[RMDB]
RNA sequence: GGGAACGACUCGAGUAGAGUCGAAAAGGAUUACUAGAACUCUGUCAACUCAGUACUGCCGGUUCGGUAGUUGUGAGUAUGCACAAGAGGGUGUUUGUAUUACCACAAAUGGCUCGUGGGCCAUUUUCUGUUAGUAUCUCUUCGGAGAUACUAACAGAAAAGAAACAACAACAACAAC
Reactivity to 2A3 in 0.01 (KOAc 150mM, MgCl2 10mM, bicine 150mM(pH8.5), 24C), signal-to-noise 1, nucleotides 027 to 126: g010g000a020u120u010a050c040u040a070g050a180a000c000u030c020u000g000u000c000a000a030c020u000c000a000g060u060a000c000u000g000c000c010g300g060u200u280c090g030g040u000a000g000u010u030g210u000g020a000g030u040a160u000g090c110a030c040a130a070g000a020g020g020g040u040g050u030u280u030g040u020a040u050u110a090c060c040a030c010a070a060a060u000g010g060c000u000c050g090u160g070g050g000c010c010a030u000u030u010u020

Conditions: 150 mM KOAc, 10 mM MgCl2 and 150 mM bicine (pH 8.5), 24 C. The record gives the reactivity of an RNA of 177 nucleotides to 2A3. It was measured as part of the RMDB library 15KREP.